[RMDB]
RNA sequence: GGGAACGACUCGAGUAGAGUCGAAAAGAUAUGGAUGCCCAUGCAGCAACAGCUCGGAAACGAGACAUGCUGACAUGAGGCAUCCUAAGUCAAAAGACUGUUGGGAGGUUCGCCUCCCAACAGUCAACUGUCAUGUUCUCUUCGGAGAACAUGACAGAAAAGAAACAACAACAACAAC
Reactivity to DMS in 0.01 (KOAc 150mM, MgCl2 10mM, bicine 150mM(pH8.5), 24C), signal-to-noise 1, nucleotides 027 to 126: g010a010u000a300u010g010g030a040u010g010c000c000c000a010u000g010c000a000g010c020a050a060c300a190g010c000u000c010g010g000a050a080a220c000g000a010g000a040c060a200u000g000c000u000g000a120c000a000u000g000a090g010g010c030a010u000c010c010u020a010a040g010u000c060a100a110a100a180g000a010c000u010g000u010u010g000g000g040a010g040g000u010u010c150g010c020c000u060c010c000c010a020a020c000a000g010u000c000a000a070

An RNA of 177 nucleotides, treated with DMS and read out base by base. DMS adducts were read by reverse transcription with MarathonRT.